Source information
Source: RMDB library OK3TST, as collected in RNAgym. This 207-nucleotide RNA was probed chemically with DMS and 2A3. The RNA was probed in 150 mM KOAc, 10 mM MgCl2 and 150 mM bicine (pH 8.5) at 24 C. In probing experiments dimethyl sulfate is read out at A N1 and C N3, which are open when not base-paired. For DMS, 2,896 sequencing reads were counted.
RNA sequence: GGGAACGACUCGAGUAGAGUCGAAAACCAUCGUGCCUUCCACGGCUGACGGCACUCUCCUGACCGGCAACGACAAGAACAUCUACGUCACUGUCGAGGAGCCAGGCAAGAGCGACGUAACCGUCUGGGACUUCGACAUCGAGGGUUCGAUGGCGACGCCUCUUAUCUCAUUCGUGAGAUAAGAGGCAAAAGAAACAACAACAACAAC
Reactivity to DMS in 0.01 (KOAc 150mM, MgCl2 10mM, bicine 150mM(pH8.5), 24C), signal-to-noise 2, nucleotides 027 to 156: c010c020a130u010c050g000u010g020c000c000u000u000c040c060a050c050g030g030c010u010g030a020c010g000g030c020a140c050u000c020u000c000c010u010g030a010c010c020g040g050c060a130a300c010g020a040c030a130a100g040a100a070c090a160u010c200u050a150c120g000u000c000a090c020u000g010u000c010g010a070g000g000a040g050c020c010a050g020g010c010a130a030g000a060g030c030g000a060c020g040u000a080a090c030c000g000u040c010u020g020g010g050a080c100u010u010c040g020a050c060a050u010c010g000a050g050g050g040u010u000c000g000a040u000g020g000c030g000a070c140
Reactivity to 2A3 in 0.01 (KOAc 150mM, MgCl2 10mM, bicine 150mM(pH8.5), 24C), signal-to-noise 7, nucleotides 027 to 156: c000c000a010u030c010g000u000g020c000c000u050u040c040c050a070c060g060g000c080u060g030a010c000g010g000c050a040c040u060c000u020c010c030u090g080a300c030c000g020g000c020a060a040c050g050a010c020a040a070g060a130a040c030a120u120c100u300a060c140g020u010c030a030c120u010g000u000c000g010a100g050g060a060g020c000c010a070g000g010c020a060a020g010a010g070c080g130a160c080g070u070a070a050c010c020g030u020c020u090g060g020g070a080c050u090u050c090g080a080c040a160u120c080g010a010g010g020g000u000u010c010g000a010u000g000g010c010g010a020c100